RNA sequence: GGGAACGACUCGAGUAGAGUCGAAAACGCGAUCAGCCCGGGCUUUCCCUACUUUGGGGCCCAAUGCUGUCGCGAAGAGUUCGGCUCUGUCAGCCCGGCUGGGUCCGGGUGGGGGCCGGCACAGAGGAUAUGCGCUUAUAUUCGUAUAAGCGCAUAUAAAAGAAACAACAACAACAAC
Reactivity to 2A3 in 0.01 (KOAc 150mM, MgCl2 10mM, bicine 150mM(pH8.5), 24C), signal-to-noise 9, nucleotides 027 to 126: c010g020c010g020a090u260c080a030g000c020c040c040g000g010g010c040u150u270u160c020c010c000u120a230c140u180u240u220g000g000g000g000c010c000c030a030a020u150g000c000u000g000u000c000g000c000g010a040a020g040a010g010u080u140c010g000g000c000u010c000u020g230u170c040a060g050c010c000c000g010g000c080u300g150g080g140u070c010c000g000g000g000u030g010g000g010g000g000c000c000g010g000c010a010c030a020g150a040g120g040
Reactivity to DMS in 0.01 (KOAc 150mM, MgCl2 10mM, bicine 150mM(pH8.5), 24C), signal-to-noise 6, nucleotides 027 to 126: c010g010c000g000a010u040c010a020g020c020c300c300g010g010g000c030u010u040u030c010c010c030u010a120c270u010u020u000g000g010g010g000c000c000c010a060a090u040g000c000u000g000u010c010g010c010g020a050a050g000a130g010u020u010c010g010g000c000u000c010u000g010u030c100a210g000c000c010c000g000g000c000u040g030g030g010u030c000c010g000g000g030u000g000g000g000g000g000c010c010g000g000c040a080c080a100g010a150g010g000
About this RNA: Chemical mapping of a 177-nucleotide RNA with 2A3 and DMS. As a SHAPE reagent, 2A3 marks flexible, mostly unpaired nucleotides at the ribose 2'-OH. 2A3 adducts were read by reverse transcription with SuperScript II with manganese. The RNA was probed in 150 mM KOAc, 10 mM MgCl2 and 150 mM bicine (pH 8.5) at 24 C.